[RMDB]
RNA sequence: GGGAACGACUCGAGUAGAGUCGAAAACUUCGGACAACGGCAUCACAUAAGAGAUGCAGCUCCUGACUUCUCCUCUGAUCUUCGUGAUCAGAGUUUUGAGUCGUCAGACUACGAGCAGUUUCUCUUAACGCAAAAUGAUGUUCGCAUCAUUUUGCGUAAAAGAAACAACAACAACAAC
Reactivity to DMS in 0.01 (KOAc 150mM, MgCl2 10mM, bicine 150mM(pH8.5), 24C), signal-to-noise 1, nucleotides 027 to 126: c030u010u000c020g000g000a010c120a070a110c090g030g010c080a000u000c090a070c170a250u000a090a050g000a040g000a020u000g030c000a100g000c000u000c020c020u000g000a030c020u000u000c000u010c000c000u020c000u000g010a010u000c000u000u060c130g000u050g000a000u000c000a000g000a000g000u000u010u060u030g000a000g040u000c120g000u000c000a000g000a100c120u020a180c300g000a010g000c000a070g000u010u020u010c000u000c000u000u010a070
Reactivity to 2A3 in 0.01 (KOAc 150mM, MgCl2 10mM, bicine 150mM(pH8.5), 24C), signal-to-noise 2, nucleotides 027 to 126: c040u100u130c060g100g000a040c050a180a000c040g080g000c000a040u020c050a050c010a120u270a100a020g010a000g010a050u000g000c000a000g000c020u000c010c000u010g000a000c000u000u000c000u030c010c000u000c010u000g000a000u010c000u070u130c250g200u250g030a000u000c000a020g000a000g030u030u000u050u080g000a000g000u000c000g000u000c000a010g040a150c020u120a010c080g000a000g000c010a050g000u000u010u010c010u000c000u010u040a060
An RNA of 177 nucleotides, treated with DMS and 2A3 and read out base by base. For 2A3 the reverse transcriptase was SuperScript II with manganese. The RNA was probed in 150 mM KOAc, 10 mM MgCl2 and 150 mM bicine (pH 8.5) at 24 C. The 2A3 profile rests on 987 reads. DMS adducts were read by reverse transcription with MarathonRT.